[RMDB]
About this RNA
The record gives the reactivity of an RNA of 177 nucleotides to DMS and 2A3. The RNA was probed in 150 mM KOAc, 10 mM MgCl2 and 150 mM bicine (pH 8.5) at 24 C. DMS (dimethyl sulfate) methylates the pairing face of unpaired adenines and cytosines. For 2A3, 2,154 sequencing reads were counted. For DMS, 2,758 sequencing reads were counted.
RNA sequence: GGGAACGACUCGAGUAGAGUCGAAAAGGAGGGGAGUAUAGGUGUCUGUGGCUUGCUAGCUGUUGGUGCCACUCCUCUCAUUGGUGAUGAUAUCUCCUUCACCCGUGGAUCAGGAGUCGCAACUGCAAUCAUGGAGCAUGUUCGCAUGCUCCAUGAUAAAAGAAACAACAACAACAAC
Reactivity to DMS in 0.01 (KOAc 150mM, MgCl2 10mM, bicine 150mM(pH8.5), 24C), signal-to-noise 2, nucleotides 027 to 126: g010g000a020g000g000g000g000a020g030u000a180u050a140g000g000u000g010u000c040u000g000u010g000g040c040u000u020g000c250u010a070g040c020u010g020u000u000g020g060u010g000c000c000a060c000u010c000c020u000c010u000c010a000u000u040g000g000u000g010a020u000g010a070u030a300u050c060u000c030c000u000u020c140a020c020c000c060g010u020g030g000a130u000c050a140g000g000a070g020u000c060g000c050a030a210c040u000g010c030a110
Reactivity to 2A3 in 0.01 (KOAc 150mM, MgCl2 10mM, bicine 150mM(pH8.5), 24C), signal-to-noise 4, nucleotides 027 to 126: g070g020a010g000g030g020g010a020g050u070a090u100a210g030g010u020g050u050c010u020g050u040g010g000c050u090u230g040c120u150a040g000c010u020g030u120u050g050g030u000g000c000c000a010c000u010c000c000u000c000u000c010a000u000u040g000g040u020g000a030u030g030a020u090a110u190c060u020c020c000u020u040c040a090c020c000c020g090u090g070g000a080u050c040a060g000g090a030g040u050c010g000c040a060a100c040u080g010c050a030